The record gives the reactivity of an RNA of 177 nucleotides to 2A3 and DMS.
The data come from the RNA Mapping Database (RMDB), libraries RFM100 and RFMREP.
Values cover nucleotides 27 to 126.
[RMDB]
RNA sequence: GGGAACGACUCGAGUAGAGUCGAAAAAGUUGGUUGAAUUGAAUGCAAUUAAUGUUUGGAGGCACUUAGUCUUCUAGUGUUUGAAUGUGGAUGGAAUUAAAGCUGGGUUUGUAGUGAGCCAUUAGGAUAGUACGGAAUAAUUCGUUAUUCCGUACUAAAAAGAAACAACAACAACAAC
Reactivity to 2A3 in 0.01 (KOAc 150mM, MgCl2 10mM, bicine 150mM(pH8.5), 24C), signal-to-noise 4, nucleotides 027 to 126: a010g060u030u040g040g020u020u040g030a040a050u010u070g040a100a050u130g030c050a020a060u020u110a120a070u150g090u110u100u090g030g000a000g000g010c010a000c160u100u140a040g010u010c020u000u030c000u040a050g040u020g040u050u090u050g080a110a040u060g000u030g000g020a050u030g020g050a070a030u140u100a140a010a020g040c010u020g050g000g050u040u050u060g050u070a070g000u010g070a010g000c010c020a040u030u090a020g080g000a020
Reactivity to DMS in 0.01 (KOAc 150mM, MgCl2 10mM, bicine 150mM(pH8.5), 24C), signal-to-noise 9, nucleotides 027 to 126: a080g020u010u000g020g000u010u010g000a080a070u000u010g010a100a080u010g000c050a050a060u010u010a060a060u010g010u010u010u010g010g010a060g010g020c020a050c160u020u020a080g010u000c040u000u010c030u010a050g010u000g010u000u010u000g000a050a040u010g010u000g010g010a060u020g010g000a060a060u010u010a040a060a080g010c030u000g000g010g020u010u000u010g020u010a040g010u010g010a080g010c030c030a060u020u010a070g010g000a190